[RMDB]
RNA sequence: GGGAACGACUCGAGUAGAGUCGAAAAAAAAAGAUAUGGAACCACGUAGUUUCUAGGGAGGACCCACUGUCGGAAACGACAGUGGUCCGAGGAUCUAGAAGGUUCGAAGUGGUUCCUAAGUCAAAAACUUAUCAAGAAUGUUCGCAUUCUUGAUAAGAAAAGAAACAACAACAACAAC
Reactivity to DMS in 0.01 (KOAc 150mM, MgCl2 10mM, bicine 150mM(pH8.5), 24C), signal-to-noise 3, nucleotides 027 to 126: a060a080a090a120a160g000a000u010a030u010g000g000a020a020c010c000a000c000g000u010a300g000u040u000u000c000u000a010g000g000g000a010g000g020a030c200c060c070a020c000u000g010u000c000g010g000a000a000a010c000g010a020c020a000g010u000g000g000u000c000c010g010a040g010g000a020u010c000u000a010g000a030a060g020g010u010u000c010g000a110a300g000u000g000g010u000u000c000c010u000a010a060g000u020c000a110a080a080a080a140